[RMDB]
Structure probing data (DMS and 2A3) for a 177-nucleotide construct. The reactions ran in a buffer of 150 mM KOAc, 10 mM MgCl2 and 150 mM bicine (pH 8.5), at 24 C. Reactivities are given for positions 27 through 126. The data come from the RNA Mapping Database (RMDB), library OK2TST.
RNA sequence: GGGAACGACUCGAGUAGAGUCGAAAACAAGUACGCGCAGUUCCUCCGUCCGGGCGACGUCCACGUGCAUUACUUCGGUACCGCCACGCUGUCCUUCGCCGACGGGAUCAAGGCUGCUCCGGGGGAAGACCUCAUAGGUGUUCGCACCUAUGAGGUCAAAAGAAACAACAACAACAAC
Reactivity to DMS in 0.01 (KOAc 150mM, MgCl2 10mM, bicine 150mM(pH8.5), 24C), signal-to-noise 2, nucleotides 027 to 126: c110a110a150g010u010a060c100g100c220g020c050a070g000u000u000c020c040u020c010c020g020u010c010c220g050g040g000c040g020a000c110g000u000c020c040a040c020g020u000g000c090a120u000u000a040c020u000u010c120g030g000u020a010c240c050g000c130c040a020c020g010c180u020g000u000c070c030u000u000c010g030c000c000g020a070c040g000g000g000a020u010c120a100a160g000g030c000u000g000c010u000c050c050g000g000g000g000g010a200a120
Reactivity to 2A3 in 0.01 (KOAc 150mM, MgCl2 10mM, bicine 150mM(pH8.5), 24C), signal-to-noise 1, nucleotides 027 to 126: c030a010a060g170u110a100c080g070c000g000c050a010g010u090u150c010c040u040c000c000g020u010c010c030g180g010g010c000g010a000c000g030u000c010c010a020c010g020u000g010c010a040u060u080a020c000u050u020c170g040g000u010a020c000c050g060c090c000a010c010g000c060u050g040u000c020c000u010u000c010g000c000c000g040a030c040g010g000g000a000u100c040a080a030g040g010c010u000g020c020u030c010c000g000g000g000g000g000a050a060